[RMDB]
RNA sequence: GGGAACGACUCGAGUAGAGUCGAAAAUGAACGCGCGGUUCAGCGCACGGACCCACGGGGUUUUAGUGAACAUAACCACGUCACCAACUUUCAGGCCAUGAGAAGCCGCGCAGGUGAUAACGCAACCCACGUAUGUGAAAUUCGUUUCACAUACGUGAAAAGAAACAACAACAACAAC
Reactivity to DMS in 0.01 (KOAc 150mM, MgCl2 10mM, bicine 150mM(pH8.5), 24C), signal-to-noise 9, nucleotides 027 to 126: u010g010a150a120c160g010c000g020c020g010g010u000u000c120a150g010c100g010c020a020c050g000g010a150c020c010c050a120c220g010g000g000g010u000u000u010u000a080g010u010g000a050a060c100a090u010a070a100c110c090a090c200g000u000c020a040c020c070a050a050c080u000u000u000c080a120g000g000c010c020a060u000g000a090g000a130a100g010c010c010g000c040g000c040a090g010g000u000g010a080u000a050a090c110g000c110a080a080c050c040
Reactivity to 2A3 in 0.01 (KOAc 150mM, MgCl2 10mM, bicine 150mM(pH8.5), 24C), signal-to-noise 9, nucleotides 027 to 126: u100g020a060a020c050g000c000g000c020g020g030u100u060c090a050g040c060g030c070a010c010g050g060a130c010c030c050a070c160g050g000g000g000u010u030u040u150a060g000u040g060a100a020c040a080u120a070a040c040c020a040c080g020u010c020a020c030c010a030a050c030u050u170u160c050a050g040g000c020c000a020u050g020a050g030a200a010g010c000c000g000c000g000c010a000g060g070u060g040a080u070a110a020c060g000c060a030a050c010c020

Structure probing data (DMS and 2A3) for a 177-nucleotide construct. For 2A3 the reverse transcriptase was SuperScript II with manganese. Values cover nucleotides 27 to 126. The RNA was probed in 150 mM KOAc, 10 mM MgCl2 and 150 mM bicine (pH 8.5) at 24 C. DMS adducts were read by reverse transcription with MarathonRT. The data come from the RNA Mapping Database (RMDB), library OK2TST.